[RMDB]
RNA sequence: GGGAACGACUCGAGUAGAGUCGAAAAGGAGUACUCUUCGGAGUACUCCAGCUACCGAGAAUCUUGCUCGGUAUAUAAAAGAAACCCUUGGAAACAAGGGAAAUACGGCAGGGUUCGCCCUGCCGAAACGCUAAUUAUACUUCGGUAUAAUUAGCGUAAAAGAAACAACAACAACAAC
Reactivity to 2A3 in 0.01 (KOAc 150mM, MgCl2 10mM, bicine 150mM(pH8.5), 24C), signal-to-noise 2, nucleotides 027 to 126: g010g000a020g040u060a000c010u010c020u110u120c300g020g000a010g000u000a000c000u020c000c000a000g000c010u010a010c000c010g000a010g010a030a150u150c090u170u300g060c010u010c000g000g000u010a020u010a000u020a110a020a010a010g080a040a060a010c000c000c020u010u010g030g000a050a040a020c000a000a000g010g000g010a040a000a000u030a010c010g000g000c010a000g010g000g030u040u060c120g070c040c000c010u010g020c000c000g010a010a010
Reactivity to DMS in 0.01 (KOAc 150mM, MgCl2 10mM, bicine 150mM(pH8.5), 24C), signal-to-noise 3, nucleotides 027 to 126: g020g000a040g020u000a000c000u000c000u000u010c170g020g010a010g020u000a000c000u000c000c000a040g010c110u000a000c010c000g000a010g000a100a090u010c160u000u010g010c000u000c000g010g000u000a010u000a040u010a030a030a030a090g000a120a110a120c000c010c000u010u010g000g010a180a120a190c000a000a000g000g010g000a020a020a080u000a120c010g010g010c010a000g000g020g020u000u010c240g010c010c010c000u000g000c000c010g000a000a030

Chemical mapping of a 177-nucleotide RNA with 2A3 and DMS.
Reactivities are given for positions 27 through 126.
It was measured as part of the RMDB library M2PK50.
The reactions ran in a buffer of 150 mM KOAc, 10 mM MgCl2 and 150 mM bicine (pH 8.5), at 24 C.